RNA sequence: GGGAACGACUCGAGUAGAGUCGAAAAGACGAGCGUUAGGGGUGGCAACAAAUGGAUCCUGAUCUUUGUUUCCGUUCCUAAAGGCUGCCUGCAACUCGUUUAAGACUAGCGCCAAAGCAGCUUGGCAAAUAGGAGUGCGAUUCGUCGCACUCCUAUUAAAAGAAACAACAACAACAAC
Reactivity to DMS in 0.01 (KOAc 150mM, MgCl2 10mM, bicine 150mM(pH8.5), 24C), signal-to-noise 2, nucleotides 027 to 126: g000a050c010g000a010g040c100g050u000u000a000g000g000g000g000u030g020g000c040a020a000c000a010a040a060u030g030g010a120u000c100c210u000g020a040u020c020u010u030u000g010u010u000u010c000c010g020u000u000c000c010u000a010a130a140g000g020c000u010g000c080c140u010g030c140a150a160c000u000c000g000u000u020u000a110a070g010a170c050u020a060g000c180g000c010c040a010a050a220g010c080a020g000c000u010u010g000g030c030a070
Reactivity to 2A3 in 0.01 (KOAc 150mM, MgCl2 10mM, bicine 150mM(pH8.5), 24C), signal-to-noise 4, nucleotides 027 to 126: g020a010c010g010a010g010c110g020u040u010a010g020g000g010g010u020g010g020c010a000a000c000a010a030a040u200g090g010a060u120c000c140u230g070a100u020c050u000u010u000g000u000u000u000c000c000g020u010u020c000c000u010a000a020a000g050g000c000u000g000c000c010u060g030c050a050a050c000u010c010g010u000u070u120a110a060g090a070c040u070a040g120c020g010c100c030a020a000a040g030c030a000g030c010u020u000g000g000c000a010
This 177-nucleotide RNA was probed chemically with DMS and 2A3. The RNA was probed in 150 mM KOAc, 10 mM MgCl2 and 150 mM bicine (pH 8.5) at 24 C. Reactivities are given for positions 27 through 126. The data come from the RNA Mapping Database (RMDB), library OK1LIB. DMS adducts were read by reverse transcription with MarathonRT. The DMS profile rests on 3,808 reads.